[RMDB]
RNA sequence: GGGAACGACUCGAGUAGAGUCGAAAAGGGAACAAGACAAACAGGUCUGUGACCUUGCAGAGUUUAGAUCUAGUUGGAACAGACACUGAGUGGGGGAUUACAGAGUGUUAUGUGUGUCUAAACCCCAACAUGGUGAAGGUUUCGACCUUCACCAUGUAAAAGAAACAACAACAACAAC
Reactivity to DMS in 0.01 (KOAc 150mM, MgCl2 10mM, bicine 150mM(pH8.5), 24C), signal-to-noise 5, nucleotides 027 to 126: g020g000g010a170a060c070a070a060g020a020c020a090a120a080c200a110g020g010u000c000u000g010u000g000a110c000c010u000u000g010c130a090g000a070g010u000u010u000a060g010a040u010c080u000a080g030u010u010g010g000a140a080c020a050g000a040c030a050c010u000g000a150g020u000g000g000g000g010g010a160u000u000a070c090a060g000a050g010u000g000u000u000a050u010g010u000g010u000g000u000c010u000a040a070a090c070c000c000c040a100
Reactivity to 2A3 in 0.01 (KOAc 150mM, MgCl2 10mM, bicine 150mM(pH8.5), 24C), signal-to-noise 2, nucleotides 027 to 126: g050g000g030a030a090c060a160a050g060a080c020a020a300a000c090a090g150g110u000c010u000g020u040g060a090c000c000u000u070g020c010a030g060a020g100u050u070u190a100g010a070u030c070u090a090g200u090u210g110g000a010a020c000a020g050a030c040a020c070u070g040a020g100u170g000g110g000g000g000a020u080u090a060c060a020g090a000g090u060g040u090u030a120u080g090u000g000u000g010u000c030u010a060a060a070c030c000c000c000a020